[RMDB]
RNA sequence: GGGAACGACUCGAGUAGAGUCGAAAAACUGGGUUUCACAUUACUAAGAAUAGUAAGAUUCAGCUUGGUGAAUACAUUUUUGAAAAGGGUGACUAUGGUGACGUGGUUACGUACCGCGCUAGUACCACCUAUAGAUUACAAGUAGGAGACUACUUUGGUAGUACUAUGACUUCGGUCAUAGUACUACAAAAGAAACAACAACAACAAC
Reactivity to 2A3 in 0.01 (KOAc 150mM, MgCl2 10mM, bicine 150mM(pH8.5), 24C), signal-to-noise 5, nucleotides 027 to 156: a000c050u060g020g010g030u030u100u130c080a060c010a040u080u140a030c020u060a090a090g070a230a200u070a100g040u040a030a030g020a160u060u040c020a010g030c080u060u110g050g020u040g050a030a010u110a080c020a130u100u150u090u170u200g090a070a080a040a030g040g020g000u020g010a010c010u030a020u130g070g060u050g060a060c020g010u010g000g000u030u040a070c170g010u040a000c020c000g010c010g000c010u020a020g030u030a060c010c030a010c000c010u060a060u040a140g110a100u070u140a050c030a030a050g050u040a000g020g050a030g020a040c030u040a010c000u080u030u030g070
Reactivity to DMS in 0.01 (KOAc 150mM, MgCl2 10mM, bicine 150mM(pH8.5), 24C), signal-to-noise 3, nucleotides 027 to 156: a070c000u000g000g020g020u010u000u000c010a060c030a160u000u010a200c050u010a100a150g020a110a120u000a080g020u000a030a060g010a070u000u000c040a050g010c030u000u000g020g030u000g030a120a100u000a060c080a120u000u000u020u000u020g000a090a100a100a160g010g000g010u000g000a130c070u000a060u010g040g030u010g020a050c040g010u000g000g020u000u010a060c270g040u000a040c010c010g010c020g040c030u000a100g020u000a070c050c000a040c020c000u000a150u000a120g000a120u010u000a080c060a060a070g010u000a060g010g030a180g010a130c050u000a080c030u000u000u000g020